[RMDB]
RNA sequence: GGGAACGACUCGAGUAGAGUCGAAAAGAUAUGGAAGGUCGAACUACGCUAGAUACUGCAAUGAUGUGAAGUCGUUCGGAAACGAACGACUUCAUUGAGCAGUAUACUAGCGCGACCUUCCUAAGUCCGUAAAUCUGUUCUUCGGAACAGAUUUACGAAAAGAAACAACAACAACAAC
Reactivity to DMS in 0.01 (KOAc 150mM, MgCl2 10mM, bicine 150mM(pH8.5), 24C), signal-to-noise 1, nucleotides 027 to 126: g040a010u000a050u010g010g000a000a000g020g000u010c000g020a100a110c190u010a300c040g010c000u010a010g010a050u000a010c000u000g010c000a110a110u000g000a030u000g020u000g010a030a000g000u000c000g030u000u000c000g000g000a020a010a080c010g000a000a010c000g020a000c000u000u000c000a000u000u000g000a300g000c000a010g010u000a000u010a040c010u010a000g000c010g000c000g010a000c000c000u000u000c000c000u000a000a060g000u010c010
Reactivity to 2A3 in 0.01 (KOAc 150mM, MgCl2 10mM, bicine 150mM(pH8.5), 24C), signal-to-noise 1, nucleotides 027 to 126: g030a020u060a000u090g000g000a000a000g000g020u010c020g000a090a060c190u250a070c300g020c000u000a010g000a020u020a000c000u000g000c020a110a300u300g120a080u300g180u020g010a030a000g000u000c010g000u010u000c020g010g020a060a030a000c030g000a040a010c000g000a010c000u010u000c010a000u000u000g010a000g000c000a000g020u000a000u060a030c000u030a010g000c000g000c010g000a000c000c010u000u030c000c010u000a000a000g020u000c000

Structure probing data (DMS and 2A3) for a 177-nucleotide construct. For 2A3, 2,072 sequencing reads were counted. For DMS the reverse transcriptase was MarathonRT. The DMS profile rests on 1,743 reads.